[RMDB]
RNA sequence: GGGAACGACUCGAGUAGAGUCGAAAAAGAGAGGCCCUUGGCAGGGCCCAUCUAGAUGAGCGUACUUUGGAAGAAGUAACUCAAGUAAGCCGGGCUUUCGGAAAUGACAAUAUUGACAAUUUGCAAGCCACUCUUAACUUUCUACUUACCAAUAGACCCAAUCCGUUAUAUUCGUAUAACGGAUUGGAAAAGAAACAACAACAACAAC
Reactivity to 2A3 in 0.01 (KOAc 150mM, MgCl2 10mM, bicine 150mM(pH8.5), 24C), signal-to-noise 2, nucleotides 027 to 156: a020g040a020g010a040g010g000c030c020c000u100u110g300g050c250a050g000g000g010c000c000c000a040u020c010u070a160g010a210u070g010a030g000c160g030u040a010c000u040u040u050g060g010a040a100g020a010a010g060u020a010a070c010u010c020a010a040g020u020a040a000g030c100c100g000g000g050c010u110u130u150c090g010g080a060a070a050u070g040a040c030a200a090u100a130u180u100g030a010c010a020a100u080u000u160g010c010a020a000g000c000c000a030c010u050c050u060u080a100a060c000u050u030u050c010u040a110c040u090u050a030c020c010a040a110u110a080g090a070c010
Chemical mapping of a 207-nucleotide RNA with 2A3. 2A3 adducts were read by reverse transcription with SuperScript II with manganese. Source: RMDB library OK3TST, as collected in RNAgym.